[RMDB]
Chemical mapping of a 177-nucleotide RNA with 2A3 and DMS. Reactivities are given for positions 27 through 126. Values are in units of 0.01, from 0 to 300, in steps of 10. The 2A3 profile rests on 711 reads. The DMS profile rests on 1,412 reads. The data come from the RNA Mapping Database (RMDB), library OK2TRN.

RNA sequence: GGGAACGACUCGAGUAGAGUCGAAAAUGGAAAUAGUCUCUAAAGUGCACACCAAGUAGCAUCUUUGGUACUACUAGGAAAGAGUACUGGCCCUCACAUAAAGGUGCACUGAAGUGAAUUAAUUAUACGAUAUAGGCUACUUCGGUAGCCUAUAUCGAAAAGAAACAACAACAACAAC
Reactivity to 2A3 in 0.01 (KOAc 150mM, MgCl2 10mM, bicine 150mM(pH8.5), 24C), signal-to-noise 1, nucleotides 027 to 126: u090g010g030a100a100a030u090a100g010u010c020u010c000u020a170a080a000g000u000g000c000a010c000a000c000c000a020a040g000u020a000g040c050a050u020c020u150u080u200g060g020u000a000c010u000a000c030u030a060g050g110a010a160a000g040a010g010u080a060c020u030g100g000c060c000c010u050c030a080c010a060u230a040a080a000g150g000u010g000c000a010c050u030g030a080a000g080u050g140a060a100u060u040a170a070u130u160a050u040a180
Reactivity to DMS in 0.01 (KOAc 150mM, MgCl2 10mM, bicine 150mM(pH8.5), 24C), signal-to-noise 2, nucleotides 027 to 126: u010g030g000a120a070a060u000a050g010u000c010u000c000u000a070a120a040g000u010g010c000a000c020a300c030c020a080a010g020u000a010g000c020a010u000c020u000u020u010g070g000u000a010c010u000a010c040u000a070g000g010a090a060a080g030a040g010u000a060c080u010g000g000c080c030c010u010c070a060c110a150u000a020a000a110g010g000u000g000c020a010c000u010g020a180a100g000u000g010a040a080u020u000a050a090u000u000a110u000a190